[RMDB]
The record gives the reactivity of an RNA of 177 nucleotides to 2A3 and DMS.
RNA sequence: GGGAACGACUCGAGUAGAGUCGAAAACACCACACACAUACACACGGAGAUGGGGAAAUAAAACGAACAAAAAGAAAACAUUCUUUUCUCUGACGAAGAGUAAAGCGCAAGGAAUAUCAGACCGAAUAGUUUGUUGAAGUUUCGACUUCAACAAACUAAAAGAAACAACAACAACAAC
Reactivity to 2A3 in 0.01 (KOAc 150mM, MgCl2 10mM, bicine 150mM(pH8.5), 24C), signal-to-noise 3, nucleotides 027 to 126: c020a000c020c000a030c000a000c000a000c000a030u090a090c010a000c010a000c030g040g010a040g040a060u000g030g000g050g040a100a010a040u190a030a030a030a010c080g120a090a000c120a040a100a010a030a000g130a010a150a000a020c050a000u070u010c000u000u030u080u010c000u000c000u010g030a000c090g070a030a020g040a000g010u090a050a000a000g090c090g010c110a060a050g060g010a060a000u060a050u220c050a010g110a060c010c040g000a000a000u020
Reactivity to DMS in 0.01 (KOAc 150mM, MgCl2 10mM, bicine 150mM(pH8.5), 24C), signal-to-noise 1, nucleotides 027 to 126: c040a070c000c000a210c010a050c050a020c090a060u000a130c030a000c000a020c050g000g000a000g040a090u020g000g080g010g010a120a020a070u000a020a020a060a090c080g040a100a100c150a000a080a140a060a060g000a020a080a140a120c090a080u030u000c060u000u000u000u000c000u000c010u020g040a120c180g010a140a050g000a020g000u000a000a020a040g010c120g000c060a100a020g010g040a060a040u000a100u000c060a030g000a120c090c040g000a090a120u060
The data come from the RNA Mapping Database (RMDB), library RFM100. The reactions ran in a buffer of 150 mM KOAc, 10 mM MgCl2 and 150 mM bicine (pH 8.5), at 24 C. For 2A3, 1,532 sequencing reads were counted. For DMS, 1,201 sequencing reads were counted.